[RMDB]
RNA sequence: GGGAACGACUCGAGUAGAGUCGAAAAACGACUGCAACCUGCUUUCGAUACAUUAUCGUCUGCGGUACUUGUAGUGCUAAAUGAAUGUGGGCCCUCCGUGUGCGUGUGAACUAAUUGAACUAGCACUGUAUACCGCCUCGUUCGCGAGGCGGUAUACAAAAGAAACAACAACAACAAC
Reactivity to 2A3 in 0.01 (KOAc 150mM, MgCl2 10mM, bicine 150mM(pH8.5), 24C), signal-to-noise 1, nucleotides 027 to 126: a000c010g000a000c000u050g000c000a000a300c000c000u050g030c000u000u000u000c000g020a030u040a090c160a210u220u300a000u040c000g020u000c000u000g000c000g000g020u140a200c140u000u000g000u000a000g030u110g110c030u190a090a160a050u220g190a070a000u160g050u160g020g120g000c000c000c000u160c060c000g000u040g000u040g060c030g030u070g160u060g150a000a130c120u000a000a230u020u000g040a030a000c040u060a040g010c000a000c020u000